[RMDB]
RNA sequence: GGGAACGACUCGAGUAGAGUCGAAAAGCCGGCGCAAUCAAUCUGGCGCGCGACCCGCGUAACGGCCGCAACUUCGAGUACCUUUCCGAGGACCCGUUGUUGAGUGCCACGAUGGCCGCGGAGUCGACUAUCUUCCUCGCUUCGGCGAGGAAGAUAGAAAAGAAACAACAACAACAAC
Reactivity to 2A3 in 0.01 (KOAc 150mM, MgCl2 10mM, bicine 150mM(pH8.5), 24C), signal-to-noise 4, nucleotides 027 to 126: g090c010c000g060g000c030g000c020a060a140u190c000a030a070u110c110u130g080g000c000g000c030g000c010g010a010c000c010c020g000c000g050u060a140a030c050g020g000c000c000g010c010a010a010c000u020u000c000g030a030g060u300a300c010c000u100u110u080c120c230g050a010g000g010a040c010c010c020g000u000u000g000u010u000g060a090g050u300g000c020c010a040c060g140a190u210g150g010c030c010g000c000g000g050a100g020u010c000g020a020
Reactivity to DMS in 0.01 (KOAc 150mM, MgCl2 10mM, bicine 150mM(pH8.5), 24C), signal-to-noise 1, nucleotides 027 to 126: g000c000c030g000g030c040g030c000a080a030u040c220a030a040u060c150u000g000g030c030g000c040g050c030g000a110c000c000c070g050c020g020u030a180a230c170g000g000c000c050g060c010a010a000c000u010u030c000g000a070g050u000a100c000c000u000u000u060c110c160g010a010g000g000a010c000c020c000g060u000u000g000u010u000g000a020g080u040g000c090c000a070c130g000a070u070g000g020c190c000g010c040g000g000a110g060u000c010g120a180